[RMDB]
RNA sequence: GGGAACGACUCGAGUAGAGUCGAAAAGCUUUCCGUUUCGACGGAAAGCAAAGGCAAGUUCAUGAGAGAUCAAAGAUCACUCAGAAAAGCCGUACUAAAGAAAAAUCAAUCUGUUCGCAGAUUGAAAAGUGGACUACAUAUUCGUAUGUAGUCCACUAAAAGAAACAACAACAACAAC
Reactivity to DMS in 0.01 (KOAc 150mM, MgCl2 10mM, bicine 150mM(pH8.5), 24C), signal-to-noise 2, nucleotides 027 to 126: g010c010u000u010u000c000c000g010u000u010u000c160g020a030c000g000g010a020a000a010g010c000a000a020a120g000g010c000a060a090g030u030u000c030a060u010g010a010g010a080g000a020u000c000a170a170a240g000a060u010c000a060c010u000c000a020g000a040a040a070a300g010c000c000g040u030a180c100u000a020a070a140g000a020a040a140a130a090u000c000a000a010u000c010u010g000u000u000c210g020c010a010g010a010u000u010g000a000a030a100
Reactivity to 2A3 in 0.01 (KOAc 150mM, MgCl2 10mM, bicine 150mM(pH8.5), 24C), signal-to-noise 2, nucleotides 027 to 126: g000c010u030u000u020c000c010g020u010u060u090c170g150a030c000g010g000a000a000a010g000c000a000a080a010g000g000c010a080a260g140u010u030c030a130u130g010a000g010a000g010a060u010c100a300a270a000g030a000u000c000a020c030u010c000a010g010a010a010a010a010g020c000c000g040u020a040c070u170a090a110a100g080a030a060a020a030a040u030c000a000a000u000c000u010g030u000u080c180g030c070a000g020a010u040u020g030a050a020a010
Chemical mapping of a 177-nucleotide RNA with DMS and 2A3.
For 2A3 the reverse transcriptase was SuperScript II with manganese.
The RNA was probed in 150 mM KOAc, 10 mM MgCl2 and 150 mM bicine (pH 8.5) at 24 C.